[RMDB]
RNA sequence: GGGAACGACUCGAGUAGAGUCGAAAAGCACUUUCAUGGUGCUUUUAAUUUCAGGAACUUAUAGCUUGAGACAGGGACGGGGUAAUUUUAUUUGGUAGCGAGAGGUGACAAUCGAUGACCUACCAAGACCUUUGGAGGAGUUCGCUCCUCCAAAGGUAAAAGAAACAACAACAACAAC
Reactivity to DMS in 0.01 (KOAc 150mM, MgCl2 10mM, bicine 150mM(pH8.5), 24C), signal-to-noise 2, nucleotides 027 to 126: g000c000a000c000u010u020u060c240a130u040g050g040u000g000c000u100u010u000u000a050a150u000u000u000c050a040g000g040a110a180c070u010u030a180u050a080g010c070u000u000g000a100g050a080c060a060g000g000g020a040c070g020g010g040g010u000a010a070u020u040u000u000a090u000u070u000g000g000u000a060g000c040g000a030g000a100g030g000u020g030a010c070a040a130u020c010g000a060u040g000a020c300c030u040a030c010c020a000a020g000
Reactivity to 2A3 in 0.01 (KOAc 150mM, MgCl2 10mM, bicine 150mM(pH8.5), 24C), signal-to-noise 1, nucleotides 027 to 126: g010c000a030c050u060u250u180c280a300u300g080g000u030g010c000u030u000u000u020a020a020u000u020u070c000a010g150g000a020a020c010u040u120a030u050a170g050c000u050u100g020a010g010a020c000a010g020g000g020a030c020g000g000g030g000u050a040a040u080u140u020u050a150u050u060u000g000g000u000a000g000c000g020a000g000a000g000g010u090g130a000c030a000a000u000c000g090a080u030g000a000c000c000u000a030c000c000a000a000g000